[RMDB]
RNA sequence: GGGAACGACUCGAGUAGAGUCGAAAAGUUUGCGGGUUCGCCCGCAAACAAAGAAAAGAUGGAAAGAUCAAGGCAGAAACGGAGCCAAAUCCGUAAAAUAAAAAAUCCUGUCCUUCGGGACAGGAAAGAAUAUACUAGACUUCGGUCUAGUAUAUUCAAAAGAAACAACAACAACAAC
Reactivity to DMS in 0.01 (KOAc 150mM, MgCl2 10mM, bicine 150mM(pH8.5), 24C), signal-to-noise 2, nucleotides 027 to 126: g000u000u000u000g020c000g000g000g010u000u010c280g020c000c000c040g000c000a000a000a000c000a050a140a080g000a120a080a100a080g030a030u000g000g030a120a120a150g000a060u010c050a050a090g010g000c030a100g000a050a150a040c010g020g000a010g020c040c120a030a060a050u010c010c020g000u000a050a010a100a180u050a000a020a100a100a090a070u000c000c000u000g000u000c000c000u000u000c200g040g000g000a000c000a010g000g000a000a000a020
Reactivity to 2A3 in 0.01 (KOAc 150mM, MgCl2 10mM, bicine 150mM(pH8.5), 24C), signal-to-noise 2, nucleotides 027 to 126: g000u030u000u000g010c000g030g040g040u030u050c160g050c040c010c010g000c010a010a000a010c000a000a000a000g000a000a110a010a010g040a070u150g070g210a080a100a120g070a060u080c070a060a090g040g000c000a000g180a070a120a000c010g020g010a000g000c020c070a100a010a000u010c010c000g000u060a010a050a050a080u230a010a110a040a020a000a050u030c000c000u000g000u000c010c010u020u090c260g130g000g010a000c000a000g000g000a000a000a000